[RMDB]
RNA sequence: GGGAACGACUCGAGUAGAGUCGAAAAGUGUUUCCUCUUCCUAGGUCCGGAGUCUACCUCCAUCUGAUCCGGGCUGGCUGUCUUCGCCGGGGGAGCUCCCUCCCCAUCCUUGACCUUUCUUAUUAUUCCUCGGAUGUUCCAUGGCCAGUGUUUAUCCCACGAAGGAUAUCUUCGGAUAUCCUUCGUGAAAAGAAACAACAACAACAAC
Reactivity to 2A3 in 0.01 (KOAc 150mM, MgCl2 10mM, bicine 150mM(pH8.5), 24C), signal-to-noise 2, nucleotides 027 to 156: g100u060g000u040u110u020c040c000u010c020u080u080c000c020u060a050g000g030u000c020c040g040g000a050g080u050c060u100a110c050c030u110c070c010a120u070c050u070g080a070u020c020c010g040g000g000c010u000g000g010c010u070g070u160c060u100u040c100g080c050c050g000g000g000g000g010a010g030c030u080c080c010c000u030c000c000c000c020a070u090c040c000u050u120g040a050c000c030u100u260u120c050u110u110a220u250u020a090u220u090c010c020u040c060g020g010a090u070g040u070u140c040c040a020u040g020g000c000c000a030g010u030g110u160u090u000a130u100c040c020
The data come from the RNA Mapping Database (RMDB), library VIROID.
Structure probing data (2A3) for a 207-nucleotide construct.
As a SHAPE reagent, 2A3 marks flexible, mostly unpaired nucleotides at the ribose 2'-OH.
Conditions: 150 mM KOAc, 10 mM MgCl2 and 150 mM bicine (pH 8.5), 24 C.